Record summary
An RNA of 177 nucleotides, treated with DMS and 2A3 and read out base by base. The reactions ran in a buffer of 150 mM KOAc, 10 mM MgCl2 and 150 mM bicine (pH 8.5), at 24 C.

RNA sequence: GGGAACGACUCGAGUAGAGUCGAAAAUGAAAGAGCGUCGCAAACACACAGACUAAGUCUCACACUGACUGACGCUAAACCGCUCUGUCAGUGAGGGAGAUAUCGGUAUUAAUGUGAGCGGAAAAAACGUUGUCUACUUGUUCGCAAGUAGACAACGAAAAGAAACAACAACAACAAC
Reactivity to DMS in 0.01 (KOAc 150mM, MgCl2 10mM, bicine 150mM(pH8.5), 24C), signal-to-noise 3, nucleotides 027 to 126: u010g010a100a130a070g010a130g000c050g020u000c010g010c060a040a110a130c120a030c060a040c140a120g000a050c110u000a070a150g010u000c000u000c010a120c010a010c000u000g000a000c010u000g000a010c110g010c030u000a030a060a120c180c100g010c050u000c010u000g010u000c000a010g020u000g000a050g010g020g010a030g000a050u000a030u000c110g020g070u000a070u010u000a060a170u010g020u000g010a120g000c030g000g000a000a050a030a020a080a090
Reactivity to 2A3 in 0.01 (KOAc 150mM, MgCl2 10mM, bicine 150mM(pH8.5), 24C), signal-to-noise 2, nucleotides 027 to 126: u210g040a060a050a020g070a000g050c020g040u020c020g010c050a030a120a030c040a000c010a010c020a040g070a040c040u110a230a020g060u010c000u010c000a010c000a000c010u010g040a000c000u010g000a000c050g010c000u000a090a040a000c030c010g020c040u000c010u020g010u000c010a000g000u010g020a090g070g130g000a020g030a010u020a050u040c020g000g020u050a050u110u110a150a100u090g010u020g020a010g000c040g010g050a050a090a000a000a020a010